[RMDB]
An RNA of 177 nucleotides, treated with 2A3 and DMS and read out base by base. The RNA was probed in 150 mM KOAc, 10 mM MgCl2 and 150 mM bicine (pH 8.5) at 24 C. For DMS, 18,904 sequencing reads were counted. It was measured as part of the RMDB library OK1LIB.
RNA sequence: GGGAACGACUCGAGUAGAGUCGAAAAGAAGAGCAGGCAGAUAAUCUUGUGCAGUAUGCAUGCUCUUAACUCCACAGGAAGAAAGGCAGCAAAAGAAUAACUGCCACUGCACAAGUGGAGCCGCAGACAUUAGCCCAUUAUUCGUAAUGGGCUAAUGAAAAGAAACAACAACAACAAC
Reactivity to 2A3 in 0.01 (KOAc 150mM, MgCl2 10mM, bicine 150mM(pH8.5), 24C), signal-to-noise 8, nucleotides 027 to 126: g130a010a000g000a000g000c000a020g030g000c010a000g020a170u150a200a110u170c020u040u050g020u050g020c010a000g030u090a080u130g020c010a010u010g010c000u000c000u000u000a030a020c030u020c020c010a100c020a060g110g110a070a090g040a160a070a020g020g000c000a000g000c040a030a040a080a100g210a120a130u130a090a030c010u010g000c000c000a000c000u020g010c000a000c010a030a010g000u010g000g040a010g020c050c040g040c060a010g020a090
Reactivity to DMS in 0.01 (KOAc 150mM, MgCl2 10mM, bicine 150mM(pH8.5), 24C), signal-to-noise 7, nucleotides 027 to 126: g000a030a020g010a020g010c010a010g010g010c000a080g010a130u040a080a080u030c020u000u010g010u010g000c060a040g000u000a070u010g010c000a030u000g000c010u000c000u000u000a050a120c060u010c000c020a090c120a110g020g010a130a060g000a070a100a090g000g000c010a000g000c160a070a090a100a140g020a150a100u010a110a220c000u000g000c010c010a130c000u000g000c030a020c010a020a020g020u000g000g000a060g000c020c040g010c120a090g000a230